About this RNA:
An RNA of 207 nucleotides, treated with 2A3 and DMS and read out base by base.
RNA sequence: GGGAACGACUCGAGUAGAGUCGAAAAGGUAUGAUUAGGGUGAGACCUAGGAACCGUAGGGGUAUUCUUAAAGGAAGCUUUUGCAGUGACGCCCAUGUAAGUGGGAUAUAACAACAGAACUCGUAUGUGUGGCACAGAGAGUUCGCUCUCUGUGCAAGUAUACACUCUAGUUCGCUAGAGUGUAUACAAAAGAAACAACAACAACAAC
Reactivity to 2A3 in 0.01 (KOAc 150mM, MgCl2 10mM, bicine 150mM(pH8.5), 24C), signal-to-noise 5, nucleotides 027 to 156: g060g000u090a050u160g040a090u070u100a040g000g010g010u030g070a080g040a040c010c020u040a040g050g040a040a040c060c040g030u060a040g000g060g000g000u040a090u110u060c050u060u140a110a060a020g050g010a040a010g050c010u030u060u100u100g040c050a020g010u010g040a020c040g020c010c000c000a010u060g060u130a110a080g010u020g000g010g010a010u020a000u020a090a030c050a030a010c020a040g070a090a030c030u040c120g030u090a070u110g070u020g010u070g050g000c000a000c000a000g000a000g000a000g010u050u020c070g050c010u000c000u000c000u000g000u000g000c000a000a000
Reactivity to DMS in 0.01 (KOAc 150mM, MgCl2 10mM, bicine 150mM(pH8.5), 24C), signal-to-noise 2, nucleotides 027 to 156: g010g010u000a090u010g010a120u010u000a080g010g010g010u000g000a130g010a080c020c020u020a080g010g010a090a050c040c050g010u000a070g010g000g010g020u000a060u000u000c040u000u000a050a090a140g010g010a090a090g000c020u000u000u000u000g030c030a110g000u000g020a150c120g030c010c010c010a010u000g010u010a080a220g020u010g000g000g010a060u000a040u000a120a090c060a060a090c050a120g000a050a080c080u000c050g020u000a070u020g020u000g020u010g010g000c000a000c000a000g010a030g020a040g020u000u000c300g010c000u010c010u000c000u010g020u000g010c000a000a050
DMS adducts were read by reverse transcription with MarathonRT.